[RMDB]
RNA sequence: GGGAACGACUCGAGUAGAGUCGAAAACAACACGUCCUCGUCGUACAGAGUGGUAACAUGUGUCACCACAUAUCCAAGCUUGGGUACACGGGCUUGAACCAACCCCUUGGGCGGAUGGUGGCACAUGAAAAGAAGUAACACUUCGGUGUUACUUCAACAUUAAGCCCGACUUCGGUCGGGCUUAAUGAAAAGAAACAACAACAACAAC
Reactivity to DMS in 0.01 (KOAc 150mM, MgCl2 10mM, bicine 150mM(pH8.5), 24C), signal-to-noise 1, nucleotides 027 to 156: c070a100a160c100a070c060g000u000c060c010u010c090g040u020c100g000u000a150c080a150g010a120g000u010g020g040u010a080a130c020a050u010g010u000g000u000c020a000c020c020a030c030a110u010a060u000c000c010a020a150g000c110u000u000g020g000g010u000a010c150a100c050g010g010g000c030u010u010g000a090a080c030c010a040a020c020c010c020c010u010u010g000g010g030c010g040g040a090u040g000g000u000g070g000c000a010c030a030u010g010a010a060a080a090g010a040a030g000u000a000a020c000a010c000u000u000c300g070g000u000g000u000u000a000c000u000u000c010a010a100
Reactivity to 2A3 in 0.01 (KOAc 150mM, MgCl2 10mM, bicine 150mM(pH8.5), 24C), signal-to-noise 2, nucleotides 027 to 156: c060a020a030c050a000c090g130u020c000c000u030c010g220u030c010g030u100a090c050a090g060a030g030u060g090g080u080a090a010c010a000u010g000u000g000u000c000a000c030c040a070c070a160u280a040u130c010c000a010a020g030c030u070u020g000g000g000u030a070c050a030c120g070g000g000c080u110u190g050a080a070c000c000a000a020c000c000c010c000u000u000g000g010g000c000g010g020a060u040g000g000u000g000g000c000a000c000a000u000g000a000a000a020a000g010a000a000g000u000a010a010c000a000c000u010u080c210g020g010u000g010u010u010a000c000u000u000c000a000a010
An RNA of 207 nucleotides, treated with DMS and 2A3 and read out base by base. Values cover nucleotides 27 to 156. DMS adducts were read by reverse transcription with MarathonRT. The RNA was probed in 150 mM KOAc, 10 mM MgCl2 and 150 mM bicine (pH 8.5) at 24 C.